[RMDB]
RNA sequence: GGGAACGACUCGAGUAGAGUCGAAAAUCAAGUCUUGAGCGUCGAUCUAUCGACAAAAAGAUUAACCAUAGAGCCAUCUCUUAACGAUAAAAGAAUAGGAGCUGCUGCAACCGUCGUAAAUGGACGCAUUUAUGUUAUCGGUGGACGAGAUGGAUCACGCUGGUAGAGCAUUCGUGCUCUACCAGCGAAAAGAAACAACAACAACAAC
Reactivity to 2A3 in 0.01 (KOAc 150mM, MgCl2 10mM, bicine 150mM(pH8.5), 24C), signal-to-noise 2, nucleotides 027 to 156: u160c020a020a030g040u050c010u000u080g040a080g030c150g020u000c000g030a070u040c050u260a300u140c010g000a040c000a000a060a000a000a030g040a060u090u090a050a000c080c070a090u090a100g040a030g070c000c000a000u000c000u000c000u070u110a020a070c020g050a030u040a060a110a040a030g140a030a030u040a150g060g000a030g020c040u120g020c050u060g020c110a090a090c030c000g030u040c010g050u050a000a010a050u110g090g060a100c050g000c150a000u040u040u000a050u060g090u070u030a050u110c030g060g070u040g000g100a020c040g000a020g000a010u030g000g010a010u030c000a000
Chemical mapping of a 207-nucleotide RNA with 2A3. For 2A3 the reverse transcriptase was SuperScript II with manganese. Source: RMDB library OK3TST, as collected in RNAgym. The reactions ran in a buffer of 150 mM KOAc, 10 mM MgCl2 and 150 mM bicine (pH 8.5), at 24 C.